[RMDB]
An RNA of 207 nucleotides, treated with 2A3 and DMS and read out base by base. The 2A3 profile rests on 6,566 reads. The data come from the RNA Mapping Database (RMDB), library OK3TST. For 2A3 the reverse transcriptase was SuperScript II with manganese. DMS adducts were read by reverse transcription with MarathonRT.
RNA sequence: GGGAACGACUCGAGUAGAGUCGAAAAUGCACUCGCAGGUGGACAAGGCAGAGGUGAAUGCUGGCGUCAAGCUGGCCACAGAGUAUGCAGCAGUGCCUUUCGAUAGCUUUACUCUACAGAAGGUGUACCAGCUGGAGACUGGCCUUACCCGCCACCAAAAUCAUAUCCUGUUCGCAGGAUAUGAUUUAAAAGAAACAACAACAACAAC
Reactivity to 2A3 in 0.01 (KOAc 150mM, MgCl2 10mM, bicine 150mM(pH8.5), 24C), signal-to-noise 6, nucleotides 027 to 156: u080g000c020a020c100u070c110g040c080a060g040g020u010g030g000a060c040a090a050g030g000c040a040g050a040g230g030u060g060a070a050u080g010c010u000g010g010c010g060u190c080a050a070g000c010u010g020g000c020c000a030c010a010g040a000g040u140a040u120g040c050a010g000c010a010g020u040g050c000c010u070u120u060c060g080a130u040a040g010c010u060u110u130a080c070u070c020u040a020c030a080g070a060a020g070g020u140g020u050a100c030c040a020g020c000u020g020g070a040g000a040c010u010g010g020c000c000u010u030a030c000c000c000g020c020c000a020c010c000a030
Reactivity to DMS in 0.01 (KOAc 150mM, MgCl2 10mM, bicine 150mM(pH8.5), 24C), signal-to-noise 4, nucleotides 027 to 156: u010g020c020a070c020u010c040g020c050a110g050g030u000g010g020a220c090a080a140g000g010c030a100g010a130g010g000u000g010a090a150u000g030c030u000g030g010c050g020u010c160a060a200g020c030u010g020g060c030c040a060c040a120g010a120g010u000a090u010g010c010a060g040c030a240g020u000g010c010c000u000u000u000c050g020a210u010a050g020c130u010u000u010a050c120u000c010u000a070c030a090g020a060a060g000g030u000g010u000a060c020c020a100g010c000u000g010g010a190g000a070c010u000g020g010c000c040u000u000a050c020c010c020g010c020c000a030c020c020a110